[RMDB]
RNA sequence: GGGAACGACUCGAGUAGAGUCGAAAAGAAACGCAAGGCCGCUGACCGACGGGAUAUUGUGGGGCUUACCACAGGGGACGCGGCGUUAUCCCUUGCCUUUUAAGCCGACCGUCUGGGCUGCAUACAAACCACCCAACUAUCUUCGGAUAGUUGGGAACACAUAAAGAUACUUCGGUAUCUUUAUGUGAAAAGAAACAACAACAACAAC
Reactivity to DMS in 0.01 (KOAc 150mM, MgCl2 10mM, bicine 150mM(pH8.5), 24C), signal-to-noise 3, nucleotides 027 to 156: g020a100a070a060c050g010c070a070a090g000g020c020c050g010c030u010g020a090c010c020g000a070c030g030g010g010a130u000a070u010u000g050u030g000g020g030g000c080u010u010a060c080c140a030c010a020g010g010g000g010a130c060g050c030g010g000c070g030u010u000a060u010c020c020c000u000u020g030c020c050u000u000u000u000a000a100g010c030c030g000a090c000c020g020u000c020u000g010g010g000c050u000g010c060a160u000a090c070a100a110a090c030c040a160c000c010c010a000a020c000u000a000u000c000u000u000c300g030g000a010u000a000g000u000u000g010g020g010a010a030
Reactivity to 2A3 in 0.01 (KOAc 150mM, MgCl2 10mM, bicine 150mM(pH8.5), 24C), signal-to-noise 5, nucleotides 027 to 156: g000a010a050a010c110g000c060a040a070g090g010c010c010g010c060u050g070a110c010c020g010a020c030g060g020g060a100u120a110u260u180g020u030g030g030g020g080c080u060u070a070c010c020a020c050a050g000g000g000g050a010c070g010c020g050g000c000g000u030u020a020u010c000c000c000u010u060g000c010c020u060u110u040u090a060a010g020c010c010g040a060c010c000g010u020c040u060g030g020g010c020u030g020c010a040u090a150c100a010a090a010c050c050a020c010c010c000a000a000c000u000a000u000c000u010u020c080g060g000a000u000a000g000u000u000g000g000g010a020a000
This 207-nucleotide RNA was probed chemically with DMS and 2A3.
The reactions ran in a buffer of 150 mM KOAc, 10 mM MgCl2 and 150 mM bicine (pH 8.5), at 24 C.
Source: RMDB library M2RFPK, as collected in RNAgym.
Reactivities are given for positions 27 through 156.